Structure probing data (DMS and 2A3) for a 177-nucleotide construct. The DMS profile rests on 10,838 reads. For 2A3, 6,080 sequencing reads were counted.
RNA sequence: GGGAACGACUCGAGUAGAGUCGAAAACAGGGAACGCACGCUCUUUUCCAUGAACAGACGCAUUUCUUAGCUGCUAAUGAGUUCCUGAAAGGAUUCGAGUCUCACUCAACAGCUGUUUUCUCGAACGUAGGACAAUUCAAUUCGUUGAAUUGUCCUAAAAAGAAACAACAACAACAAC
Reactivity to DMS in 0.01 (KOAc 150mM, MgCl2 10mM, bicine 150mM(pH8.5), 24C), signal-to-noise 9, nucleotides 027 to 126: c080a170g010g000g000a040a030c080g020c060a080c110g010c050u000c020u010u000u000u000c050c080a130u000g010a070a060c090a060g010a070c100g010c080a080u000u000u010c050u000u000a090g010c050u000g010c060u000a130a070u000g010a100g000u010u000c010c020u000g000a100a100a120g000g010a170u000u000c030g010a040g010u000c020u000c100a060c030u000c040a050a090c230a030g000c040u000g000u000u000u000u000c030u010c050g020a080a100c270g010
Reactivity to 2A3 in 0.01 (KOAc 150mM, MgCl2 10mM, bicine 150mM(pH8.5), 24C), signal-to-noise 3, nucleotides 027 to 126: c020a010g000g010g040a050a000c020g020c050a020c070g040c020u030c000u040u080u050u000c050c070a090u140g030a010a010c040a030g080a050c030g000c050a050u000u120u070c030u050u110a090g030c170u030g000c020u070a070a060u110g030a030g040u030u020c000c000u020g090a220a090a030g070g030a050u030u030c020g020a030g080u000c020u000c020a030c000u020c010a030a070c010a120g010c000u010g030u010u050u020u020c040u020c010g060a070a060c050g060